[RMDB]
RNA sequence: GGGAACGACUCGAGUAGAGUCGAAAAAUGAUAAGGGUUGUGCUAAGCGCGGAGAUAUUGGCGUGGUUAGCAAGGUUCUACAUAAUGUAGACGGCCAAUAUAAGAUUCUUUAUCAAAUUAAGUGUCCCGAUAUAGAGUUCUUUAUGGACGGAGAGAACGGUUUUAAGAUAUUCGUAUCUUAAAACCGAAAAGAAACAACAACAACAAC
Reactivity to DMS in 0.01 (KOAc 150mM, MgCl2 10mM, bicine 150mM(pH8.5), 24C), signal-to-noise 1, nucleotides 027 to 156: a110u000g000a070u010a030a040g000g070g020u010u010g040u020g000c000u000a080a060g040c070g030c030g050g000a100g010a060u010a100u000u000g000g030c010g030u010g040g020u010u010a030g010c060a110a090g010g000u000u010c010u010a040c000a170u000a150a160u000g010u000a070g010a000c150g020g030c030c000a070a040u000a080u000a130a140g000a100u000u010c010u010u000u000a040u020c000a050a050a110u000u000a100a180g000u010g020u000c010c010c020g070a090u010a040u030a070g010a120g010u000u000c010u010u010u000a070u020g000g010a040c030g000g000a120g010a140g000a090a290
Reactivity to 2A3 in 0.01 (KOAc 150mM, MgCl2 10mM, bicine 150mM(pH8.5), 24C), signal-to-noise 3, nucleotides 027 to 156: a000u060g000a030u010a020a000g070g000g020u050u000g020u040g000c000u020a040a010g030c010g000c060g060g150a100g030a080u300a080u160u200g080g010c030g010u030g010g170u010u030a000g020c030a010a030g030g020u080u010c000u010a000c000a050u270a160a140u300g000u000a010g010a050c070g030g000c000c030a060a020u130a010u020a090a030g030a040u100u080c000u030u070u010a030u010c000a020a050a190u100u050a110a030g050u020g020u010c010c000c000g000a010u040a000u010a060g100a010g070u050u010c040u060u220u150a140u200g050g030a020c070g020g010a020g000a000g000a090a020
This 207-nucleotide RNA was probed chemically with DMS and 2A3.
It was measured as part of the RMDB library OK3TST.
2A3 adducts were read by reverse transcription with SuperScript II with manganese.
The RNA was probed in 150 mM KOAc, 10 mM MgCl2 and 150 mM bicine (pH 8.5) at 24 C.